[RMDB]
RNA sequence: GGGAACGACUCGAGUAGAGUCGAAAAAGCAUGGCCGCAUUGAAGGUAAACCCGGUCUGCAGUUCAUCGGUGCAAAACUGGACGAGCUUACUAUUAGUCUGGUGUUUCACAAGCAGUACUGCACGCCAGAUGUGGAGCUGAAACGGUUGACGGAGGCCAGCUAAUUUGCUUUCGAGCAAAUUAGCUGAAAAGAAACAACAACAACAAC
Reactivity to 2A3 in 0.01 (KOAc 150mM, MgCl2 10mM, bicine 150mM(pH8.5), 24C), signal-to-noise 1, nucleotides 027 to 156: a000g070c010a010u060g030g010c000c000g000c110a070u030u080g050a100a020g020g050u190a130a070a120c000c000c000g000g030u000c030u010g020c000a030g000u040u020c000a030u070c170g070g000u030g060c050a000a000a300a000c020u000g030g030a000c030g000a020g030c070u140u190a050c100u210a090u230u060a000g000u000c010u000g090g000u020g070u060u250u150c040a050c000a030a050g150c060a000g040u060a130c030u000g030c030a030c000g040c030c010a020g000a090u090g040u050g020g030a040g000c040u050g030a050a090a030c050g120g050u050u050g080a060c020g030g000a040g060g000c000
Structure probing data (2A3) for a 207-nucleotide construct. The 2A3 profile rests on 605 reads.